[RMDB]
RNA sequence: GGGAACGACUCGAGUAGAGUCGAAAACACCGUCGAUUUCCAUGUUUUUAGCAGUCGCGUAGUACGACGCUGCGUUCGUCAUCAUCUCAUGGAUAAUCUCACCGAACGGACGUUGCCCUAAACCUAACUGAGCGUAAACGGCUUCCGGUGGUAGCUCCGAGAGGAUAUGAUUCGUCAUAUCCUCUCGAAAAGAAACAACAACAACAAC
Reactivity to DMS in 0.01 (KOAc 150mM, MgCl2 10mM, bicine 150mM(pH8.5), 24C), signal-to-noise 4, nucleotides 027 to 156: c040a120c020c020g000u010c030g000a110u000u000u000c020c010a080u000g010u000u000u000u000u000a150g010c020a070g000u000c040g030c010g020u000a160g030u000a060c000g000a050c030g030c040u000g010c040g030u000u000c060g030u000c070a090u010c050a040u000c060u000c050a060u000g010g010a040u010a020a030u000c040u000c040a120c090c010g000a060a040c060g010g000a040c020g020u000u010g010c010c010c020u000a070a100a100c030c030u010a090a130c050u000g010a050g010c050g010u000a070a070a090c060g010g000c030u010u000c020c010g030g000u010g010g020u000a090g020c060u010c050
Reactivity to 2A3 in 0.01 (KOAc 150mM, MgCl2 10mM, bicine 150mM(pH8.5), 24C), signal-to-noise 9, nucleotides 027 to 156: c060a010c010c010g090u070c050g010a020u020u000u020c000c000a010u020g060u000u040u010u030u130a100g030c100a040g060u180c070g000c020g020u080a050g020u070a140c120g070a060c090g090c020u000g010c010g020u070u150c050g060u060c040a120u040c010a030u020c080u000c040a010u020g000g000a020u110a160a040u040c080u040c050a090c040c050g060a070a030c020g000g110a050c060g040u040u060g040c000c000c000u090a160a130a060c020c020u050a060a090c070u070g030a010g030c030g050u100a070a080a070c040g040g020c050u100u040c040c010g010g010u020g020g030u020a030g000c020u010c040
This 207-nucleotide RNA was probed chemically with DMS and 2A3. For 2A3, 9,570 sequencing reads were counted. DMS adducts were read by reverse transcription with MarathonRT. Reactivities are given for positions 27 through 156.